Chemical mapping of a 177-nucleotide RNA with DMS and 2A3. The reactions ran in a buffer of 150 mM KOAc, 10 mM MgCl2 and 150 mM bicine (pH 8.5), at 24 C. For 2A3 the reverse transcriptase was SuperScript II with manganese. The DMS profile rests on 4,343 reads.
[RMDB]
RNA sequence: GGGAACGACUCGAGUAGAGUCGAAAAGAUAUGGAGCAUCGAAAGGCAACAGCCGUCUGUCGGAAACGACAGGACGGACAUGCCUUGAUGCUCCUAAGUCAAAUCUGUCCCCUUCGGGGGACAGAAAGUUUAAAAUUACCUUCGGGUAAUUUUAAACAAAAGAAACAACAACAACAAC
Reactivity to DMS in 0.01 (KOAc 150mM, MgCl2 10mM, bicine 150mM(pH8.5), 24C), signal-to-noise 3, nucleotides 027 to 126: g000a020u000a030u000g000g000a000g000c000a010u000c000g020a080a090a040g010g030c000a180a100c160a220g000c000c000g010u010c000u000g000u010c000g010g000a000a010a020c000g010a020c010a020g030g000a010c000g000g000a020c030a210u020g020c000c000u000u000g000a000u000g010c000u000c000c000u000a010a050g000u000c010a150a150a170u010c000u010g010u000c000c010c000c000u000u020c240g040g040g030g000g000a000c000a000g010a020a030a080
Reactivity to 2A3 in 0.01 (KOAc 150mM, MgCl2 10mM, bicine 150mM(pH8.5), 24C), signal-to-noise 4, nucleotides 027 to 126: g000a000u010a000u050g000g000a000g010c000a020u000c080g300a280a220a140g110g000c180a300a050c080a300g000c010c000g010u000c010u000g000u000c010g000g030a000a000a000c000g010a000c010a010g100g120a000c000g010g010a000c010a170u300g000c000c000u000u020g000a000u010g000c000u000c010c000u000a000a000g000u000c000a020a010a170u020c000u010g000u000c030c000c010c010u020u060c170g140g000g000g000g000a000c010a000g000a010a000a000